[RMDB]
RNA sequence: GGGAACGACUCGAGUAGAGUCGAAAAGGGCACCUAUUUCAAGGGUGUGGGCACGAAACCACAAGCUCCUGUGAGCUCAUAUCGCUGCUGAUGGGUUGACAGAGUAAGCGGGUUCCGGACACUGUGGUACCCAGCUACCUUUCGAGGUAGCUGGGUAAAAAGAAACAACAACAACAAC
Reactivity to DMS in 0.01 (KOAc 150mM, MgCl2 10mM, bicine 150mM(pH8.5), 24C), signal-to-noise 2, nucleotides 027 to 126: g000g010g020c020a010c000c000u000a090u020u040u020c300a080a070g000g010g000u030g020u040g000g000g010c130a100c150g000a010a070a050c000c000a070c110a090a180g010c110u000c040c100u000g000u000g000a020g010c000u020c020a060u040a070u040c070g040c050u000g000c000u000g040a160u010g000g010g010u020u000g050a050c000a010g000a000g060u020a170a200g040c110g000g020g000u000u000c000c030g000g000a110c130a190c050u000g010u000g000g020
Reactivity to 2A3 in 0.01 (KOAc 150mM, MgCl2 10mM, bicine 150mM(pH8.5), 24C), signal-to-noise 3, nucleotides 027 to 126: g020g020g000c040a040c010c020u110a160u210u210u120c150a130a150g010g000g000u030g000u020g000g030g010c070a050c110g080a050a030a000c000c000a030c060a080a010g020c030u020c020c030u120g090u140g100a010g000c000u030c010a100u140a060u070c060g080c170u150g030c010u040g000a080u040g000g040g000u100u040g010a060c000a040g070a030g080u130a090a000g010c030g000g030g000u020u000c010c000g040g010a080c040a000c150u030g020u020g040g010

Chemical mapping of a 177-nucleotide RNA with DMS and 2A3. For 2A3, 1,300 sequencing reads were counted. The RNA was probed in 150 mM KOAc, 10 mM MgCl2 and 150 mM bicine (pH 8.5) at 24 C.